[RMDB]
RNA sequence: GGGAACGACUCGAGUAGAGUCGAAAAACGCUCGUUACGACGAGCGAAAUGGAUGGAAGAGAGCGUCCUUCAGUCCACUCAUGGGCGGUGCUAGGGUCGAAUUAGCUGCCGACUCAUUCACCCACAUGCCAAGCAAGAAACGCUUGAGAUAGCGAAGCUUAGCAGAUGAGUGAAUGAAGCGGGAGGUAACGUUCCGAUCUCGCGCCGUCUUUGCUUGGACUGAAGGGUGCUCCCUCCUCCUCGAUCAGCCUCCAUACGUGGAGGCAACUGUGUUGUUCGCAACACAGAAAAGAAACAACAACAACAAC
Reactivity to DMS in 0.01 (KOAc 150mM, MgCl2 10mM, bicine 150mM(pH8.5), 24C), signal-to-noise 4, nucleotides 027 to 266: a150c020g010c000u000c010g010u000u010a110c220g040a010c000g000a010g010c000g010a010a050a040u010g000g010a020u030g020g010a070a050g000a130g000a020g020c000g020u000c000c000u000u000c000a000g000u000c000c010a010c050u000c000a000u000g000g010g010c010g010g000u010g010c010u010a150g020g000g030u000c010g000a100a130u010u000a060g000c010u000g000c010c010g000a020c010u000c000a010u000u000c010a000c000c010c000a030c300a110u000g010c000c050a010a010g020c000a210a150g010a160a190a240c020g010c000u000u000g010a160g000a110u010a010g000c000g010a130a190g010c000u010u000a070g010c000a010g010a250u010g010a050g000u010g000a020a000u010g000a020a040g000c000g010g000g010a010g000g010u000a020a050c200g000u000u010c140c010g010a030u000c000u000c300g010c010g020c000c010g000u000c000u000u000u000g000c060u000u000g000g000a010c010u000g000a010a000g010g000g010u000g010c010u000c000c010c010u000c010c000u000c010c000u000c200g000a100u020c110a090g010c000c000u000c000c000a030u000a100c180g010u000g000g000a010g010g000c010a000a020
Reactivity to 2A3 in 0.01 (KOAc 150mM, MgCl2 10mM, bicine 150mM(pH8.5), 24C), signal-to-noise 7, nucleotides 027 to 266: a000c000g000c000u000c000g010u020u070a080c280g020a000c000g000a070g000c010g010a020a000a010u110g010g040a030u170g000g080a180a050g110a010g000a000g030c000g010u010c000c000u000u000c000a000g000u000c000c000a000c000u000c000a010u010g000g000g010c010g000g010u020g000c020u070a110g020g030g070u010c000g010a020a020u040u010a050g070c010u080g180c020c010g210a260c000u000c000a000u000u000c000a000c010c010c000a020c010a030u020g000c000c010a000a000g000c010a070a060g070a300a220a020c020g000c000u030u050g050a070g030a090u150a020g000c000g030a080a000g000c000u010u010a000g000c010a010g020a210u030g010a020g020u000g010a000a000u010g010a040a010g010c010g020g010g030a020g060g090u040a040a030c100g080u070u060c150c050g000a020u010c070u030c040g000c000g000c010c000g000u010c000u000u000u000g000c000u010u000g000g000a000c000u000g000a000a000g000g000g000u000g000c000u000c000c000c000u000c000c000u000c010c000u020c020g070a120u100c030a020g000c010c010u000c020c010a050u050a110c260g140u050g010g000a000g000g000c000a010a020
Background:
An RNA of 307 nucleotides, treated with DMS and 2A3 and read out base by base. For DMS the reverse transcriptase was MarathonRT. Conditions: 150 mM KOAc, 10 mM MgCl2 and 150 mM bicine (pH 8.5), 24 C. The 2A3 profile rests on 13,971 reads.